[RMDB]
RNA sequence: GGGAACGACUCGAGUAGAGUCGAAAAUCGUCACCGCGGACCCGCAUCAGCGUCAGAUGCCCACCUUGUGGGAGGUGCCAGCGCAGGCGUCGGUGGCCAAACACACGGCACCGCGCGGUUCGUCGAGACUUUAGGCAGGGUUCGCCCUGCCUAAAGUAAAAGAAACAACAACAACAAC
Reactivity to DMS in 0.01 (KOAc 150mM, MgCl2 10mM, bicine 150mM(pH8.5), 24C), signal-to-noise 2, nucleotides 027 to 126: u000c050g010u000c040a150c090c100g000c030g000g010a040c060c030c010g000c030a050u000c060a160g010c140g000u010c120a160g010a040u000g020c000c050c000a050c000c090u000u020g000u000g040g000g020a090g000g030u010g020c040c040a130g020c060g020c090a190g040g000c010g030u010c040g000g020u000g020g000c020c100a060a120a120c120a040c130a090c110g000g000c020a040c000c000g020c030g000c040g000g000u000u000c070g000u010c070g040a140g000
Reactivity to 2A3 in 0.01 (KOAc 150mM, MgCl2 10mM, bicine 150mM(pH8.5), 24C), signal-to-noise 2, nucleotides 027 to 126: u080c020g090u040c020a010c060c040g000c030g010g010a050c000c030c000g000c010a110u090c050a020g040c000g220u080c070a040g050a110u050g000c000c020c000a040c020c090u180u240g080u100g100g050g000a010g010g070u040g040c040c040a080g000c060g000c080a060g060g000c000g040u090c040g040g010u070g160g060c030c010a040a150a010c060a000c010a030c120g000g000c000a010c030c010g000c010g030c020g030g100u030u030c040g060u040c040g010a020g050